[RMDB]
RNA sequence: GGGAACGACUCGAGUAGAGUCGAAAAACGCCCGGAGCCAAGCGCGGCGUGGGCUGAAGCCCGGCGGCGGGUACGCCAACGCCGCGAGGACAUGCUGCGCCAUCCUGCAUUUCUGUCCAAGCAGCUCCCUAAACGACCGUUUCGACGGUCGUUUAGGAAAAGAAACAACAACAACAAC
Reactivity to 2A3 in 0.01 (KOAc 150mM, MgCl2 10mM, bicine 150mM(pH8.5), 24C), signal-to-noise 1, nucleotides 027 to 126: a000c060g090c000c000c020g000g070a050g000c020c010a110a010g130c030g000c020g030g000c000g000u000g000g000g000c000u020g050a080a000g030c010c020c000g060g090c100g070g040c020g010g010g000u050a020c070g020c040c000a000a020c000g000c000c000g000c000g000a000g000g000a010c020a030u080g020c020u020g030c040g050c070c000a070u070c020c020u080g000c020a010u100u150u040c060u080g040u000c010c010a050a020g020c030a020g000c000u030c030
Reactivity to DMS in 0.01 (KOAc 150mM, MgCl2 10mM, bicine 150mM(pH8.5), 24C), signal-to-noise 1, nucleotides 027 to 126: a100c300g060c060c000c000g000g000a010g000c010c050a270a150g000c040g000c000g000g040c000g010u000g000g020g000c000u010g000a090a190g040c020c000c080g070g000c300g000g000c000g000g010g000u000a110c190g000c020c020a060a020c000g000c000c020g000c000g000a080g000g040a040c090a030u000g050c180u010g010c060g010c020c090a090u020c110c130u040g050c030a060u010u000u020c040u010g010u000c040c060a090a140g000c120a090g000c010u000c020
This 177-nucleotide RNA was probed chemically with 2A3 and DMS. The 2A3 profile rests on 1,099 reads. For DMS the reverse transcriptase was MarathonRT. It was measured as part of the RMDB library RFM100.